[RMDB]
RNA sequence: GGGAACGACUCGAGUAGAGUCGAAAAGUCUUAACUUCGGUUAAGACAAACCGUAGGUUCCUUUGCUUUUGACGUAGUGAGGCCACCUUCGAAAGAGGGUGGCUCUACGAUAAGCAACUGGGAACCUAAACGGAAAAUACGUGCCUUCGGGCACGUACUUAGGGCAACAGUUCGCUGUUGCCCUAAGAAAAGAAACAACAACAACAAC
Reactivity to DMS in 0.01 (KOAc 150mM, MgCl2 10mM, bicine 150mM(pH8.5), 24C), signal-to-noise 1, nucleotides 027 to 156: g000u000c000u000u010a000a060c000u000u010c300g050g000u000u010a020a020g000a020c000a010a050a030c000c010g020u000a030g000g010u000u000c000c000u010u000u000g000c000u000u020u000u010g010a240c090g010u020a030g020u000g010a190g010g020c030c010a000c040c020u000u000c020g000a170a080a300g010a050g000g010g040u000g010g010c000u010c000u000a010c030g000a090u010a040a050g000c010a000a030c300u010g050g120g020a040a010c020c000u000a010a010a080c010g000g010a110a050a090a200u000a020c010g040u000g020c000c000u000u000c300g080g000g030c000a000c000g010u000a030
Reactivity to 2A3 in 0.01 (KOAc 150mM, MgCl2 10mM, bicine 150mM(pH8.5), 24C), signal-to-noise 3, nucleotides 027 to 156: g000u010c000u000u000a000a010c010u060u110c300g130g000u000u000a000a000g000a000c000a030a030a000c010c000g010u000a000g020g030u000u000c000c000u020u030u020g020c010u010u080u110u200g150a140c020g010u020a020g030u060g300a170g150g000c000c000a000c000c000u000u000c000g060a100a050a040g010a000g000g000g000u000g000g000c000u020c000u000a000c010g000a000u000a000a000g000c010a000a030c230u200g040g000g000a000a000c000c000u010a040a080a000c010g020g010a030a050a000a090u090a010c000g000u000g010c030c000u080u160c290g050g010g000c000a000c000g000u000a000